[RMDB]
RNA sequence: GGGAACGACUCGAGUAGAGUCGAAAAGAGGAGGAAAGCAAAGAAAGCAACGGGGCUAGCCGUCAGGUGUUCCUCCCCCCGAGAGGGGAAGAGUGAGGCUUAUCCCGGGGAACUCGGCGAAUCGUCCAUGCUCCCAUGUUCGCAUGGGAGAAAAGAAACAACAACAACAAC
Reactivity to DMS in 0.01 (KOAc 150mM, MgCl2 10mM, bicine 150mM(pH8.5), 24C), signal-to-noise 9, nucleotides 027 to 129: g020a090g020g010a000g000g000a000a030a030g000c160a070a060a080g020a100a080a060g010c070a110a090c090g000g030g020g050c070u030a090g040c010c010g040u030c090a090g020g030u030g030u000u000c020c010u000c010c010c010c010c010c040g020a070g030a100g050g000g000g030a050a010g020a060g030u050g000a100g000g000c060u030u000a100u040c020c020c000g000g000g000g000a000a010c010u020c020g010g010c030g010a000a070u030c060g030u040c040c050a080u050g020
Reactivity to 2A3 in 0.01 (KOAc 150mM, MgCl2 10mM, bicine 150mM(pH8.5), 24C), signal-to-noise 9, nucleotides 027 to 129: g070a020g020g010a010g010g020a070a020a010g030c080a070a060a050g070a050a090a010g040c030a050a060c050g010g000g030g020c030u040a020g020c010c000g080u060c030a040g020g080u070g060u090u050c010c010u010c010c000c000c000c000c000g060a050g040a060g010g010g010g010a030a010g010a010g040u190g020a020g010g000c000u040u060a050u110c000c010c010g000g000g000g000a020a010c020u000c020g010g000c010g020a030a050u050c020g030u010c050c020a050u130g030

Structure probing data (DMS and 2A3) for a 170-nucleotide construct. For 2A3 the reverse transcriptase was SuperScript II with manganese. Reactivities are given for positions 27 through 129. The RNA was probed in 150 mM KOAc, 10 mM MgCl2 and 150 mM bicine (pH 8.5) at 24 C.